Structure probing data (2A3 and DMS) for a 207-nucleotide construct. The DMS profile rests on 2,281 reads. 2A3 adducts were read by reverse transcription with SuperScript II with manganese. Reactivities are given for positions 27 through 156. DMS adducts were read by reverse transcription with MarathonRT. Conditions: 150 mM KOAc, 10 mM MgCl2 and 150 mM bicine (pH 8.5), 24 C.

[RMDB]
RNA sequence: GGGAACGACUCGAGUAGAGUCGAAAAAGGUAGUCAAGAAUCUUCAAAAGCCAGCAUCCUACAUUCAUUCAUUCACUGGACAGCACCUUCAAAGAGCUAGUAAGUGCCAGGUGGUUCAGAGGCAGUCAAGGCCACUGCCCUCAAGAAGCUCAUUGUACCAAAAUCACUGAUUCGUCAGUGAUUUUGGAAAAGAAACAACAACAACAAC
Reactivity to 2A3 in 0.01 (KOAc 150mM, MgCl2 10mM, bicine 150mM(pH8.5), 24C), signal-to-noise 2, nucleotides 027 to 156: a010g050g000u040a020g000u060c030a020a030g040a070a080u030c020u140u070c100a110a100a010a020g040c020c010a000g030c000a030u020c000c030u080a070c040a080u060u120c000a020u060u050c010a010u100u040c050a050c060u030g020g000a000c010a020g050c030a060c000c020u070u050c030a110a150a040g020a020g000c030u080a030g060u110a220a060g020u020g030c050c030a000g020g070u010g040g000u050u010c020a010g010a030g080g010c010a000g030u090c080a140a070g060g000c000c000a010c010u020g000c000c020c010u020c020a060a110g040a040a010g010c020u010c080a040u030u140g060u050a030
Reactivity to DMS in 0.01 (KOAc 150mM, MgCl2 10mM, bicine 150mM(pH8.5), 24C), signal-to-noise 1, nucleotides 027 to 156: a000g030g010u010a050g030u010c060a140a210g030a060a140u000c060u000u020c050a080a080a120a160g010c020c000a030g050c010a090u000c030c040u020a090c010a140u010u000c090a090u020u000c040a090u000u000c080a060c040u010g010g030a070c010a070g000c020a040c020c000u000u000c030a050a090a130g010a040g000c030u000a070g020u000a070a030g050u000g000c010c040a130g000g040u000g000g000u000u000c040a110g010a060g010g060c010a050g020u000c060a000a110g010g040c000c040a040c020u000g060c030c010c030u000c040a030a120g020a050a040g010c020u000c060a160u000u000g000u010a140